[RMDB]
RNA sequence: GGGAACGACUCGAGUAGAGUCGAAAAAGGAAUCUGAUAGUUACAGGCAUCGUCACCAUAUCAUUUCCGCUGAGGUCUAAGUAUGUUAAAUUGGUGCAAUGACUAAACGUAUAUGACAAUUCAAAAACAUCAUUGCAGUUGUCAAGCCAAAGCUCAAUCAUUAAAUCAGGUUCGCCUGAUUUAAUGAAAAAGAAACAACAACAACAAC
Reactivity to 2A3 in 0.01 (KOAc 150mM, MgCl2 10mM, bicine 150mM(pH8.5), 24C), signal-to-noise 5, nucleotides 027 to 156: a000g070g010a040a030u050c060u040g020a050u030a080g060u050u080a040c070a050g000g050c030a120u070c080g070u070c030a030c060c010a030u020a020u100c050a050u050u050u010c030c020g000c060u040g070a030g000g030u010c010u030a060a110g030u060a070u130g040u040u120a090a100a120u130u060g050g010u030g000c010a020a050u040g000a010c010u080a060a110a020c070g040u070a070u020a040u170g040a040c060a060a060u080u070c040a030a130a030a060a050c040a040u050c000a010u010u030g010c020a010g010u050u040g020u020c030a030a010g010c020c030a080a040a010g020c020u010c090a060a080
Reactivity to DMS in 0.01 (KOAc 150mM, MgCl2 10mM, bicine 150mM(pH8.5), 24C), signal-to-noise 6, nucleotides 027 to 156: a080g000g020a070a050u000c050u010g020a110u010a050g010u010u000a100c060a080g010g020c020a070u000c070g010u000c030a080c040c020a140u000a050u020c050a110u000u000u000c020c040g030c090u000g020a140g020g010u000c030u000a060a190g020u010a050u010g010u000u000a040a070a190u000u000g030g010u010g020c020a050a050u010g020a050c040u000a070a060a090c090g020u000a080u000a140u000g000a060c060a040a130u000u000c080a050a050a080a100a110c130a090u000c020a030u000u000g010c030a080g020u000u000g010u000c030a070a170g020c030c010a050a120a140g010c020u000c010a030a300

Structure probing data (2A3 and DMS) for a 207-nucleotide construct. For 2A3 the reverse transcriptase was SuperScript II with manganese. The reactions ran in a buffer of 150 mM KOAc, 10 mM MgCl2 and 150 mM bicine (pH 8.5), at 24 C. It was measured as part of the RMDB library OK3TST. For DMS, 14,699 sequencing reads were counted. DMS adducts were read by reverse transcription with MarathonRT.